Chemical mapping of a 207-nucleotide RNA with 2A3 and DMS. Conditions: 150 mM KOAc, 10 mM MgCl2 and 150 mM bicine (pH 8.5), 24 C. For DMS the reverse transcriptase was MarathonRT.
RNA sequence: GGGAACGACUCGAGUAGAGUCGAAAACCAGGCGCUUCGGCGCCUGGAAAAAAACCUUUGUGAAUGUAGAGCAUCGAUCUGGUGCAUCUCCCAUUGGGAGAUGCCAGGGAGCUCUGACAUUCACUCUGGUAAAAAACCAUAGUUUCGACUAUGGUAACAUCUUGAUAGUAUUCGUACUAUCAAGAUGAAAAGAAACAACAACAACAAC
Reactivity to 2A3 in 0.01 (KOAc 150mM, MgCl2 10mM, bicine 150mM(pH8.5), 24C), signal-to-noise 3, nucleotides 027 to 156: c000c000a030g000g030c020g050c050u090u150c270g120g000c030g060c000c000u010g000g000a000a000a040a000a000a000a040c010c000u020u000u030g010u010g000a000a000u000g000u010a000g000a000g010c020a140u300c070g100a070u030c000u030g030g090u150g130c010a020u030c000u030c000c050c120a300u230u300g030g000g000a010g000a010u000g020c010c010a000g010g000g000a010g000c000u000c000u000g030a010c000a000u000u000c000a000c000u000c000u000g000g020u050a150a120a010a020a030a000c000c000a000u000a000g010u000u070u150c180g080a030c000u000a010u000g000g000u000a000a050
Reactivity to DMS in 0.01 (KOAc 150mM, MgCl2 10mM, bicine 150mM(pH8.5), 24C), signal-to-noise 1, nucleotides 027 to 156: c010c000a030g010g030c010g120c000u000u000c110g060g030c020g060c010c020u000g000g010a010a000a090a160a150a120a040c020c000u020u000u080g020u000g010a040a000u010g000u000a000g010a040g020c030a180u000c110g010a050u000c010u020g000g000u010g020c060a030u000c000u000c000c000c010a300u000u000g070g040g010a020g000a010u000g030c020c020a050g000g010g000a080g000c000u000c000u000g000a030c000a020u000u000c010a010c010u010c040u000g000g020u000a000a030a100a120a080a060c000c000a010u000a000g030u000u000u020c240g010a070c000u000a000u000g000g010u010a020a190